RNA sequence: GGGAACGACUCGAGUAGAGUCGAAAAGCAGCUACACGCUAUAUGAUAACUAGCACGUUAGUUAUCAUCACUGACACGCGAUUCAGUGAAGUUAUGAUCGCGUGCUCGUAACUUAUAGGCGGUAGAAGAUACGAUACUGAUUCGUUAGUGUUGUAUCAAAAGAAACAACAACAACAAC
Reactivity to DMS in 0.01 (KOAc 150mM, MgCl2 10mM, bicine 150mM(pH8.5), 24C), signal-to-noise 9, nucleotides 027 to 126: g010c100a140g010c000u000a000c010a150c010g010c010u000a030u000a020u000g000a010u000a010a010c000u000a020g020c180a110c250g010u010u000a030g000u000u000a000u000c000a040u010c130a020c050u020g000a030c050a060c050g000c060g010a030u020u010c030a030g010u020g010a110a090g010u020u030a060u000g010a030u000c020g010c040g010u000g010c070u000c040g010u010a070a060c150u010u010a030u010a050g010g010c000g010g000u000a010g000a100a100
Reactivity to 2A3 in 0.01 (KOAc 150mM, MgCl2 10mM, bicine 150mM(pH8.5), 24C), signal-to-noise 9, nucleotides 027 to 126: g060c040a010g020c000u010a000c180a030c030g000c010u010a010u000a000u050g030a030u030a100a010c000u000a010g050c070a020c200g060u100u060a030g010u030u040a040u000c000a000u010c010a010c020u060g070a040c000a010c050g060c030g070a060u120u110c020a010g020u010g120a070a010g030u090u070a050u050g000a000u010c000g000c010g020u010g000c000u000c000g020u030a050a030c020u070u050a020u040a080g090g020c010g010g000u000a000g010a040a010
Structure probing data (DMS and 2A3) for a 177-nucleotide construct. The 2A3 profile rests on 101,884 reads. For 2A3 the reverse transcriptase was SuperScript II with manganese.